[RMDB]
RNA sequence: GGGAACGACUCGAGUAGAGUCGAAAACUGAGACGCUUCGGCGUCUCAGAAAUGGAACACAGGGGAAGGAAGCAAGAGCUAUCAUGCCAAUGACCACGUGGAAAACUCAUACGUUCGCGUAUGAGAACUAUUGAGAUAGGUUCGCCUAUCUCAAUAGAAAAGAAACAACAACAACAAC
Reactivity to DMS in 0.01 (KOAc 150mM, MgCl2 10mM, bicine 150mM(pH8.5), 24C), signal-to-noise 7, nucleotides 027 to 126: c000u000g000a000g010a010c000g040c010u010u020c210g040g010c000g030u000c000u000c000a000g000a020a070a080u020g000g000a100a080c050a040c070a120g000g010g010g010a140a060g010g000a080a120g010c050a040a050g000a060g010c130u010a060u000c050a060u000g010c020c030a110a100u000g000a130c040c020a050c090g000u000g000g000a070a060a090a130c000u000c000a010u000a010c000g020u000u010c210g020c000g010u000a000u000g010a010g000a040a110
Reactivity to 2A3 in 0.01 (KOAc 150mM, MgCl2 10mM, bicine 150mM(pH8.5), 24C), signal-to-noise 5, nucleotides 027 to 126: c000u010g000a000g000a000c000g020c020u050u050c160g160g000c010g000u000c000u020c000a000g000a000a000a000u060g020g030a060a020c030a010c030a080g000g000g010g030a030a030g010g020a020a020g010c030a050a040g020a010g090c040u080a100u260c010a020u080g020c010c000a030a030u050g020a050c020c000a050c090g020u070g050g020a040a050a050a070c000u000c000a000u000a010c010g020u020u060c260g000c000g110u010a000u010g000a000g000a000a020